Chemical mapping of a 177-nucleotide RNA with DMS and 2A3. The DMS profile rests on 1,475 reads. It was measured as part of the RMDB library TTRDES. The RNA was probed in 150 mM KOAc, 10 mM MgCl2 and 150 mM bicine (pH 8.5) at 24 C. DMS adducts were read by reverse transcription with MarathonRT. 2A3 adducts were read by reverse transcription with SuperScript II with manganese.
[RMDB]
RNA sequence: GGGAACGACUCGAGUAGAGUCGAAAAGAUAUGGACGCUAUCCAGGGAGUCCGUAUUCGGAAACGAAUACCAGGACAUCGAUCUGGUAAGGCGUCCUAAGUCAAACACGUGUGUUCGCACACGUGAAGAGAAUAGGUGACUUCGGUCACCUAUUCUCAAAAGAAACAACAACAACAAC
Reactivity to DMS in 0.01 (KOAc 150mM, MgCl2 10mM, bicine 150mM(pH8.5), 24C), signal-to-noise 2, nucleotides 027 to 126: g020a020u000a090u020g000g010a010c000g030c000u000a200u010c030c010a030g000g000g010a020g010u000c000c000g010u000a000u000u000c000g000g000a010a040a060c020g010a010a000u000a000c040c180a250g050g020a010c000a250u000c250g000a030u000c000u000g000g000u010a230a090g020g000c010g000u000c000c020u000a020a050g010u000c020a150a160a220c020a000c030g020u000g010u000g020u000u030c300g060c020a020c000a000c000g040u000g000a050a080
Reactivity to 2A3 in 0.01 (KOAc 150mM, MgCl2 10mM, bicine 150mM(pH8.5), 24C), signal-to-noise 2, nucleotides 027 to 126: g000a010u020a040u080g000g010a000c000g020c020u020a020u160c020c000a000g010g000g020a040g020u020c000c000g030u010a000u020u000c020g010g030a000a010a010c000g000a010a000u060a030c150c250a160g020g000a030c030a100u300c190g050a030u000c010u000g000g060u060a150a150g300g000c000g000u000c000c000u010a000a000g000u000c000a000a060a050c020a000c000g010u000g000u020g020u100u140c300g000c140a000c000a000c020g000u000g000a020a070